[RMDB]
RNA sequence: GGGAACGACUCGAGUAGAGUCGAAAAGGGGUCGAGGGAGGAUCGGAGAAGCAUCGAUCAUACACUGAAGCCUCCACGGUGUAUGGGAGCUUUGACGAUCCGAGGAUCUCGACGGAGGCACCCAAAAGAUUUCCACGACUUCGGUCGUGGAAAUCAACGUGUCUUAGAUGUUCGCAUCUAAGACACGAAAAGAAACAACAACAACAAC
Reactivity to 2A3 in 0.01 (KOAc 150mM, MgCl2 10mM, bicine 150mM(pH8.5), 24C), signal-to-noise 2, nucleotides 027 to 156: g060g020g060g020u010c010g010a000g010g020g000a020g000g000a000u010c000g000g000a060g010a030a000g000c010a030u300c060g030a030u010c020a000u010a000c000a000c000u030g040a120a020g030c000c000u010c000c000a010c010g000g000u000g000u000a000u000g010g000g020a060g000c000u050u010u020g010a030c000g000a000u000c000c020g000a020g000g000a000u010c000u000c000g000a010c000g000g000a010g000g010c000a030c000c000c000a050a110a010a060g000a010u000u000u000c000c010a000c000g000a000c020u060u170c300g100g010u000c010g010u010g000g000a000a000a000u000c000a000a010